[RMDB]
The record gives the reactivity of an RNA of 177 nucleotides to DMS and 2A3.
RNA sequence: GGGAACGACUCGAGUAGAGUCGAAAAACAACACCGACCCGAAACGCAAAGUCCGCUUCCUGCCAUACGGCAUCGCGGUCAGCGUCCUCGACGAUCCGGUGGACGAGGCCCAGUAACGUCAGCCCUGGGAACGUAGAAGGUUCGCCUUCUACGUUCCAAAAGAAACAACAACAACAAC
Reactivity to DMS in 0.01 (KOAc 150mM, MgCl2 10mM, bicine 150mM(pH8.5), 24C), signal-to-noise 2, nucleotides 027 to 126: a110c070a090a160c090a040c040c000g000a110c120c020c000g000a020a030a090c010g030c050a030a070a120g020u000c000c000g000c000u040u010c090c130u020g030c010c020a240u060a070c180g020g050c020a050u000c160g020c080g010g000u000c030a140g070c030g000u000c130c120u000c000g020a070c120g000a090u040c050c090g040g030u010g000g000a070c130g000a070g000g070c060c040c020a070g010u000a100a060c060g000u020c040a180g020c020c000c030u030g000
Reactivity to 2A3 in 0.01 (KOAc 150mM, MgCl2 10mM, bicine 150mM(pH8.5), 24C), signal-to-noise 5, nucleotides 027 to 126: a000c050a010a010c020a020c020c000g030a050c000c000c010g020a070a020a000c020g010c040a090a050a090g020u020c010c000g000c020u100u040c030c000u010g030c010c020a200u200a300c130g000g010c020a040u080c070g010c020g000g000u000c020a010g020c000g000u020c010c020u080c030g080a120c030g030a070u050c100c040g000g020u030g010g030a020c030g030a060g070g010c000c000c010a010g050u050a030a020c020g030u010c050a020g030c000c010c000u050g040
Values cover nucleotides 27 to 126.
It was measured as part of the RMDB library OK1LIB.
For DMS, 2,398 sequencing reads were counted.